[RMDB]
RNA sequence: GGGAACGACUCGAGUAGAGUCGAAAAGAUAUGGACCAUGACCCGCAACGCGAAGAACUUAAUCGGAAACGAUUAAGGGAGCGUUGACGCAUGGUCCUAAGUCGGCAGGCACACUUCGGUGUGCCAAGCACACCUUGCUGUUCGCAGCAAGGUGUGCAAAAGAAACAACAACAACAAC
Reactivity to DMS in 0.01 (KOAc 150mM, MgCl2 10mM, bicine 150mM(pH8.5), 24C), signal-to-noise 1, nucleotides 027 to 126: g060a050u000a300u020g010g020a010c000c010a000u000g010a140c090c140c120g000c030a010a030c020g000c010g000a110a170g000a140a150c000u000u000a000a000u010c010g010g000a140a110a240c010g010a000u000u000a040a000g010g000g010a040g040c000g010u000u000g000a060c300g000c010a000u000g000g020u010c000c010u000a020a090g080u000c050g000g030c210a130g000g000c000a000c000a000c000u000u000c120g050g000u000g010u010g000c000c000a000a090
Reactivity to 2A3 in 0.01 (KOAc 150mM, MgCl2 10mM, bicine 150mM(pH8.5), 24C), signal-to-noise 1, nucleotides 027 to 126: g000a010u110a060u170g020g000a000c000c000a010u040g170a240c000c040c100g030c060a010a000c010g020c010g250a300a070g050a020a010c020u000u000a010a000u000c000g030g060a050a060a030c000g000a000u000u020a010a000g000g010g030a020g000c020g010u000u000g030a020c020g000c000a000u010g000g010u000c000c000u010a000a020g050u040c000g060g130c070a100g040g020c000a000c010a000c030u080u160c300g120g020u010g000u010g000c010c000a000a000